[RMDB]
RNA sequence: GGGAACGACUCGAGUAGAGUCGAAAAGGAUUCCUGUACUUGAAUCCCGCAGCAACUAUAACUCUCAAGCCUUUUAAGCUCGUGGUCGGGGCGUUCGAAUCCCCCACUCGCCGCCAAAUACAGGAUAACAAAAGGACUAUUUCGAUAGUCCUUUUGUAAAAGAAACAACAACAACAAC
Reactivity to DMS in 0.01 (KOAc 150mM, MgCl2 10mM, bicine 150mM(pH8.5), 24C), signal-to-noise 5, nucleotides 027 to 126: g010g010a200u000u000c000c010u000g030u000a100c060u000u000g010a140a130u000c030c000c010g010c130a060g000c080a090a050c120u010a120u010a100a080c070u010c040u000c040a060a090g000c020c020u000u010u010u010a120a210g000c020u000c070g020u010g010g010u000c060g010g010g000g010c080g010u000u000c120g000a130a170u010c040c020c010c030c030a090c060u000c030g010c240c030g010c030c040a020a050a080u010a030c040a030g010g010a090u010a070
Reactivity to 2A3 in 0.01 (KOAc 150mM, MgCl2 10mM, bicine 150mM(pH8.5), 24C), signal-to-noise 2, nucleotides 027 to 126: g010g030a020u040u000c000c000u020g030u040a040c030u030u050g050a120a080u050c000c000c000g040c070a060g010c010a010a070c040u160a090u070a300a080c010u050c010u010c080a060a080g060c020c020u080u120u050u110a030a010g010c010u030c050g070u060g010g040u040c060g020g000g000g000c030g020u040u020c000g020a040a110u050c020c010c000c000c000a010c000u000c010g030c000c020g070c020c020a020a010a000u060a010c010a010g010g010a010u030a070